[RMDB]
RNA sequence: GGGAACGACUCGAGUAGAGUCGAAAAAGGAGAGUAUCGGAUUCCACGUACUGACACCAGACACAGAGGAGGCGUUGUUGCCCCCAAUUUUCUGCAAGGACGAGUGCGUAAAGUGUUUCUGUCCGCACGCCUAGUCCACUUUCGAGUGGACUAGGCGAAAAGAAACAACAACAACAAC
Reactivity to 2A3 in 0.01 (KOAc 150mM, MgCl2 10mM, bicine 150mM(pH8.5), 24C), signal-to-noise 1, nucleotides 027 to 126: a000g190g080a010g000a040g000u050a180u000c000g000g000a000u090u090c020c010a000c020g010u000a050c020u050g010a070c000a010c020c000a000g020a060c030a000c020a060g120a200g060g000a030g020g020c040g030u000u060g020u030u070g030c000c000c080c000c000a010a050u000u150u000u000c000u000g030c010a050a180g000g000a010c190g020a070g010u030g030c010g030u080a030a140a140g140u100g080u070u100u030c050u120g120u040c000c000g000c020a070